[RMDB]
The record gives the reactivity of an RNA of 207 nucleotides to DMS and 2A3. It was measured as part of the RMDB library M2RFPK.

RNA sequence: GGGAACGACUCGAGUAGAGUCGAAAAGGGAAUGGUGGUUUACCCCGUUAUCAAAUGAUUACCGACCAAUAAUUGGCGAAACUCGUUUCGCGUUGGCUGCCUAAUUCAAGGAAUUAGCGUGCCUCCAAAGACAUCAAGAAGUUCGCUUCUUGAUGAAGAUAUUCUCUAACUUCGGUUAGAGAAUAUCAAAAGAAACAACAACAACAAC
Reactivity to DMS in 0.01 (KOAc 150mM, MgCl2 10mM, bicine 150mM(pH8.5), 24C), signal-to-noise 3, nucleotides 027 to 156: g000g020g000a050a060u000g000g000u000g010g000u010u000u000a140c010c010c010c040g030u000u010a070u000c120a080a070a090u000g020a100u000u000a050c030c020g000a110c030c010a090a100u000a090a160u000u000g020g030c000g020a100a080a030c060u000c090g060u010u000u010c020g010c020g010u010u010g000g000c030u000g000c110c040u000a000a030u000u010c050a130a150g030g010a030a040u000u000a050g000c050g000u000g010c000c010u000c040c030a020a100a150g000a240c000a010u000c000a020a020g010a010a000g020u000u010c300g020c000u000u000c010u000u000g010a020u000g000a020a090
Reactivity to 2A3 in 0.01 (KOAc 150mM, MgCl2 10mM, bicine 150mM(pH8.5), 24C), signal-to-noise 6, nucleotides 027 to 156: g030g000g010a130a130u150g010g040u030g000g030u050u060u230a130c020c000c000c020g110u100u060a100u110c040a060a070a090u160g020a040u060u070a030c000c030g070a080c030c040a030a020u190a130a070u110u150g060g000c020g000a010a040a050c070u060c070g030u010u020u010c030g000c010g010u030u050g000g010c040u070g030c020c010u010a010a000u010u010c100a180a080g170g020a100a020u000u000a010g020c030g050u030g010c020c000u010c000c010a000a130a040g090a060c010a010u000c000a000a000g000a000a000g020u040u160c200g040c090u000u000c000u000u000g000a000u000g000a010a000
Values cover nucleotides 27 to 156. The DMS profile rests on 7,196 reads. The reactions ran in a buffer of 150 mM KOAc, 10 mM MgCl2 and 150 mM bicine (pH 8.5), at 24 C.